[RMDB]
RNA sequence: GGGAACGACUCGAGUAGAGUCGAAAACGAGCGAAAGCGGAUGGAGCCCAAACCGAAGGUAUUCCUUCGGGGUUGUAGGACCACGUCAUAUUCGACCAUACUGGAUAGUAGAACAGCCUGGAAAGGCUCACAUACGAUCAUUCGUGAUCGUAUGUGAAAAAGAAACAACAACAACAAC
Reactivity to DMS in 0.01 (KOAc 150mM, MgCl2 10mM, bicine 150mM(pH8.5), 24C), signal-to-noise 8, nucleotides 027 to 126: c070g000a300g010c020g010a070a080a130g010c020g000g010a120u000g010g000a150g010c010c010c020a030a070a100c020c010g000a010a010g010g020u030a190u030u040c010c010u000u000c010g000g000g010g010u000u010g010u020a080g030g000a070c010c030a070c040g010u000c090a080u020a170u010u010c030g000a060c020c080a130u010a030c030u000g000g010a040u010a080g010u010a060g000a130a120c110a070g000c000c000u000g000g060a110a110a030g010g010c010
Reactivity to 2A3 in 0.01 (KOAc 150mM, MgCl2 10mM, bicine 150mM(pH8.5), 24C), signal-to-noise 9, nucleotides 027 to 126: c040g010a020g020c020g030a100a020a000g020c010g040g020a070u060g030g030a060g040c010c000c000a020a010a010c000c000g000a000a000g040g000u160a220u230u300c000c000u010u000c000g000g000g010g020u030u080g050u070a050g000g020a000c010c010a020c030g030u020c060a010u030a130u160u040c020g010a020c020c010a040u030a070c020u040g060g010a040u050a080g050u020a020g050a110a060c030a020g000c000c000u030g030g070a120a100a020g010g010c000